This 207-nucleotide RNA was probed chemically with DMS and 2A3. The 2A3 profile rests on 982 reads. High DMS reactivity at an A or C suggests that its Watson-Crick edge is free. The RNA was probed in 150 mM KOAc, 10 mM MgCl2 and 150 mM bicine (pH 8.5) at 24 C.
RNA sequence: GGGAACGACUCGAGUAGAGUCGAAAAUUACACUGAGAGCAUUUAGCCUGAUUACUCUUUAAAGCAAAUCAGGCAAUAGAGAGAAACUCGAGAGGUGAAAACCCCACAGCAUUCUGAAAUGUAUUUGAAGGCAACGCUACCUUCGGGUAGCGUUGAAACACAUAAUACGGUUCGCCGUAUUAUGUGUAAAAGAAACAACAACAACAAC
Reactivity to DMS in 0.01 (KOAc 150mM, MgCl2 10mM, bicine 150mM(pH8.5), 24C), signal-to-noise 1, nucleotides 027 to 156: u000u010a140c060a060c000u020g010a250g000a050g010c020a140u000u010u000a180g000c000c010u020g030a030u010u000a020c020u020c030u020u030u000a090a050a000g000c030a040a040a020u000c020a020g010g000c000a060a110u010a090g000a150g000a200g000a130a200a020c030u010c000g010a170g000a100g020g020u030g020a030a100a110a120c050c010c000c060a130c120a110g050c000a080u010u010c030u000g000a090a130a050u000g000u010a140u000u010u010g010a090a120g010g020c000a050a020c000g050c010u000a000c000c010u000u010c300g050g020g010u000a010g010c000g000u010u000g000a030a070
Reactivity to 2A3 in 0.01 (KOAc 150mM, MgCl2 10mM, bicine 150mM(pH8.5), 24C), signal-to-noise 2, nucleotides 027 to 156: u120u090a040c020a000c120u080g020a000g000a010g070c070a070u070u060u060a040g050c000c000u000g010a000u020u030a060c020u030c090u100u270u170a180a150a000g030c060a090a000a000u000c000a000g000g000c010a000a000u020a000g000a000g010a010g050a080a020a020c030u010c060g020a050g000a020g070g040u020g000a070a010a000a010c040c010c060c000a020c020a020g100c020a050u080u150c080u120g060a100a120a020u090g040u050a080u080u130u130g100a100a030g150g000c010a000a010c010g000c000u000a000c000c000u040u030c080g020g000g000u000a000g000c000g000u000u000g020a000a000
Values cover nucleotides 27 to 156.